[RMDB]
RNA sequence: GGGAACGACUCGAGUAGAGUCGAAAAUCUAUCACCAGCCCAAGUUUACGACACGAAUGGGCUGUUGCAAAUUACGUAUAGCUCUUGCAACAUCGUGUCGAAACGUUCCCAAGCUAUACGCCACAAACGGCACUUAUCCUUUCGAGGAUAAGUGCCGAAAAGAAACAACAACAACAAC
Reactivity to 2A3 in 0.01 (KOAc 150mM, MgCl2 10mM, bicine 150mM(pH8.5), 24C), signal-to-noise 1, nucleotides 027 to 126: u020c000u000a160u070c020a000c120c000a000g070c000c000c030a050a010g020u060u140u100a090c050g010a000c010a000c010g030a030a100u240g000g140g000c010u010g000u000u000g000c020a010a020a090u190u070a070c010g000u000a000u000a010g000c010u030c020u140u000g020c020a040a020c000a050u010c040g010u000g020u010c010g030a100a050a000c020g010u000u020c000c000c000a010a010g000c030u000a010u000a020c000g060c000c030a130c040a030a170a010
Reactivity to DMS in 0.01 (KOAc 150mM, MgCl2 10mM, bicine 150mM(pH8.5), 24C), signal-to-noise 1, nucleotides 027 to 126: u000c150u000a020u000c020a070c100c080a000g000c000c010c010a130a180g020u000u000u050a090c020g000a010c010a010c000g000a070a160u000g030g070g010c080u010g000u010u000g010c010a040a020a150u080u000a080c010g070u000a000u000a050g000c040u000c300u000u000g010c000a020a030c070a000u000c000g000u000g010u000c000g000a050a020a180c070g040u000u000c040c020c000a110a000g000c000u040a110u000a000c000g020c090c260a170c180a040a120a070

The record gives the reactivity of an RNA of 177 nucleotides to 2A3 and DMS.
Reactivities are given for positions 27 through 126.
The RNA was probed in 150 mM KOAc, 10 mM MgCl2 and 150 mM bicine (pH 8.5) at 24 C.
For DMS, 623 sequencing reads were counted.